[RMDB]
RNA sequence: GGGAACGACUCGAGUAGAGUCGAAAAACGAUGUCGUUCGCGACAUCGUAAAUUGUAUAACCUUGCUUGAAGUCUACUUGGUUCUAAAGCGAGACAAGUCAGUGAGAGUCCUAUUCGUAGGACUCAAAUCUAACUACGUAUUCGUACGUAGUUAGAUAAAAGAAACAACAACAACAAC
Reactivity to DMS in 0.01 (KOAc 150mM, MgCl2 10mM, bicine 150mM(pH8.5), 24C), signal-to-noise 9, nucleotides 027 to 126: a020c000g010a010u000g010u000c010g020u000u020c210g020c010g010a010c000a000u000c000g010u000a010a050a080u010u010g010u010a110u000a110a150c070c010u000u000g010c030u000u000g000a090a110g010u000c010u000a070c060u000u000g010g010u000u000c080u000a070a050a070g010c100g000a030g000a040c030a040a060g000u010c100a060g010u010g000a180g000a020g000u000c000c000u000a020u000u010c160g020u000a000g000g010a010c000u000c010a010a050
Reactivity to 2A3 in 0.01 (KOAc 150mM, MgCl2 10mM, bicine 150mM(pH8.5), 24C), signal-to-noise 9, nucleotides 027 to 126: a000c000g000a010u010g010u000c010g000u040u050c170g000c010g090a000c010a000u000c000g000u000a000a010a020u100u070g100u020a110u040a170a060c010c000u010u040g020c010u040u040g070a130a030g030u020c010u020a080c060u210u160g050g000u180u000c040u140a120a040a030g060c070g030a010g010a020c030a070a050g060u100c080a050g030u040g200a140g000a000g040u000c000c000u010a030u030u080c210g050u030a000g000g010a010c000u000c000a000a000